[RMDB]
RNA sequence: GGGAACGACUCGAGUAGAGUCGAAAACAGAGGUUCGCCUCUGAAAAGUCCUUCUUAGCCAUCUUUAGCUCCCGGUUUUUAAGGACUAUCUAUACUCAAAAUGCUUCAAAAUCAACCUUCGGGUUGAGUUAUACUCUUGGUUCGCCAAGAGUAUAACAAAAGAAACAACAACAACAAC
Reactivity to 2A3 in 0.01 (KOAc 150mM, MgCl2 10mM, bicine 150mM(pH8.5), 24C), signal-to-noise 4, nucleotides 027 to 126: c000a000g010a010g020g030u060u070c160g080c030c000u000c000u000g000a030a010a010a010g000u000c010c000u010u030c010u020u040a000g000c000c020a120u080c160u130u300u180a060g040c040u080c020c050c020g010g030u010u030u000u000u020a010a010g010g010a010c000u010a010u000c010u050a090u070a110c030u040c080a040a090a080a080u100g060c040u120u140c060a100a150a090a200u060c000a000a020c020c010u020u040c170g030g000g010u000u000g000a000
Reactivity to DMS in 0.01 (KOAc 150mM, MgCl2 10mM, bicine 150mM(pH8.5), 24C), signal-to-noise 3, nucleotides 027 to 126: c030a000g000a020g010g010u000u010c240g010c010c000u010c000u000g010a030a080a140a060g010u000c000c010u000u000c030u000u000a050g010c030c000a130u010c060u010u000u020a130g000c090u000c020c040c040g010g000u000u000u010u000u010a010a040g020g010a020c000u000a030u020c140u010a100u010a050c040u000c050a060a100a110a170u020g010c060u020u000c050a070a070a110a250u010c000a000a000c000c000u000u040c180g010g000g010u000u000g000a030